RNA sequence: GGGAACGACUCGAGUAGAGUCGAAAAAACAGUGCAACUCCCUGCACAAAGCACUGUGACAUCUGUCUUCAAUUGAGUAACGGUCGUCGGUUCAAGUCGAUCGGUGGCCUUCAAUCUUGCCGCCGAAGCACAUAUGCUAGUUCGCUAGCAUAUGUGCAAAAGAAACAACAACAACAAC
Reactivity to DMS in 0.01 (KOAc 150mM, MgCl2 10mM, bicine 150mM(pH8.5), 24C), signal-to-noise 3, nucleotides 027 to 126: a090a010c030a010g010u000g010c000a070a100c150u000c010c010c020u000g010c150a170c110a100a090a140g000c010a010c010u000g000u000g010a120c130a040u000c070u010g010u010c020u000u000c050a090a110u010u010g020a090g000u000a090a090c080g000g010u000c000g030u000c010g020g010u000u010c050a050a080g030u020c130g000a040u010c000g010g000u000g010g010c010c180u010u000c120a050a080u010c150u030u010g030c010c010g000c010c030g000a070a090
Reactivity to 2A3 in 0.01 (KOAc 150mM, MgCl2 10mM, bicine 150mM(pH8.5), 24C), signal-to-noise 2, nucleotides 027 to 126: a000a000c010a030g000u020g000c030a090a140c060u030c040c010c010u080g070c060a040c040a070a080a000g020c000a000c000u000g020u030g050a020c010a110u040c060u130g090u020c030u110u070c050a100a270u130u130g030a060g040u080a080a060c070g020g030u030c030g020u010c000g010g040u090u100c060a080a100g080u120c050g070a060u000c000g000g030u010g010g000c010c050u050u060c040a060a120u010c020u020u150g010c000c030g080c030c030g050a060a010